[RMDB]
RNA sequence: GGGAACGACUCGAGUAGAGUCGAAAAAAUAAUGCAUUAAACUGACUGAUCAUCCAUAUUAUUGUAAAGGAGGUAUGUAACAUGGCAGGCGAUAUCGUAGGUACAAUCGGUGACUUCGUUAAAUUAAACUGGCAUUAUCGUUCGCGAUAAUGCCAGUAAAAGAAACAACAACAACAAC
Reactivity to 2A3 in 0.01 (KOAc 150mM, MgCl2 10mM, bicine 150mM(pH8.5), 24C), signal-to-noise 1, nucleotides 027 to 126: a000a010u240a050a030u080g120c000a000u070u070a280a000a000c070u000g040a000c040u120g000a040u010c060a080u000c140c000a150u120a010u250u080a040u000u240g130u110a000a210a120g000g000a000g000g000u000a000u230g000u010a000a000c000a000u030g000g000c010a000g030g090c030g000a000u010a000u090c120g010u070a080g130g000u050a030c000a000a000u050c040g000g000u010g010a010c010u000u000c050g020u030u030a050a000a100u070u050a060a080
Reactivity to DMS in 0.01 (KOAc 150mM, MgCl2 10mM, bicine 150mM(pH8.5), 24C), signal-to-noise 1, nucleotides 027 to 126: a020a010u060a070a060u030g000c080a020u020u000a030a020a190c060u000g000a100c030u000g000a100u030c070a110u000c120c000a130u000a000u000u000a140u000u050g000u000a080a120a020g030g000a050g050g020u000a000u000g000u000a110a120c100a030u020g000g000c000a060g000g030c060g010a100u040a070u060c050g040u000a030g000g010u020a000c040a050a070u010c030g000g000u020g000a020c110u090u050c110g010u000u000a000a020a140u000u010a110a130